[RMDB]
RNA sequence: GGGAACGACUCGAGUAGAGUCGAAAAAGUUUGGCCGACCUUUGGUUCAAACUAUCGAGCAGAAUCGAAAGGGUAUUCAGUUCUCUUGGUCGCCAGUUUGCUGGGCAGUGGUCCCUAUGGGAACGCACCACGCCAUCACCUUCGGGUGAUGGCGUGGAAAAGAAACAACAACAACAAC
Reactivity to 2A3 in 0.01 (KOAc 150mM, MgCl2 10mM, bicine 150mM(pH8.5), 24C), signal-to-noise 1, nucleotides 027 to 126: a020g000u000u000u000g000g070c000c000g000a300c050c120u060u140u300g150g000u270u070c030a010a000a000c000u070a100u010c000g000a000g020c060a050g070a080a110u000c000g000a060a000a000g000g120g000u060a050u160u110c040a000g000u010u010c010u000c010u000u140g030g000u020c000g000c020c000a120g000u000u210u150g190c060u000g000g000g040c000a110g050u120g040g080u060c000c000c000u000a080u300g000g000g030a070a030c000g010c040a000

Chemical mapping of a 177-nucleotide RNA with 2A3. Values cover nucleotides 27 to 126. The RNA was probed in 150 mM KOAc, 10 mM MgCl2 and 150 mM bicine (pH 8.5) at 24 C.